[RMDB]
RNA sequence: GGGAACGACUCGAGUAGAGUCGAAAAUGUUGACGUUCGCGUCAACAAAAAACCUUUGUGAUCAGGAGAGCGAUAAGUCUAGAUGGCCCAUUGGGCCAUGUAGACUUUUGACGCUUGACUGAUCACUCUGGUAAAGGAAGUUGUUUCGACAACUUCCCACAGCAAGACCUUUCGAGGUCUUGCUGUGAAAAGAAACAACAACAACAAC
Reactivity to DMS in 0.01 (KOAc 150mM, MgCl2 10mM, bicine 150mM(pH8.5), 24C), signal-to-noise 1, nucleotides 027 to 156: u020g030u000u010g010a000c020g030u000u010c300g050c030g000u000c000a020a000c000a000a060a060a100a100a050c010c000u000u000u010g010u010g010a010u010c000a010g030g000a300g000a010g010c000g040a200u000a020a000g020u000c010u000a020g000a000u000g000g010c000c000c010a300u000u000g100g020g000c000c000a000u000g010u010a020g000a010c010u010u000u000u000g000a180c030g000c020u010u000g020a300c000u000g000a010u000c000a000c000u000c030u000g000g000u000a020a130a100g000g010a010a070g000u000u020g000u000u000u000c170g010a110c020a030a060c000u000u000c000c000
Reactivity to 2A3 in 0.01 (KOAc 150mM, MgCl2 10mM, bicine 150mM(pH8.5), 24C), signal-to-noise 3, nucleotides 027 to 156: u060g000u000u000g000a010c020g010u090u020c300g030c040g090u050c020a020a000c030a020a050a000a060a000a020c030c000u020u000u020g010u000g000a000u010c000a000g020g010a030g010a000g050c000g020a030u010a090a010g010u000c000u000a030g000a240u000g000g000c000c000c110a220u160u300g040g000g010c050c000a000u000g010u010a000g000a000c000u000u000u000u010g020a000c010g000c000u000u000g000a000c000u000g000a000u000c000a000c000u020c000u010g000g010u070a140a030a070g030g010a010a010g000u010u010g040u040u150u160c250g120a050c000a000a000c000u010u000c000c000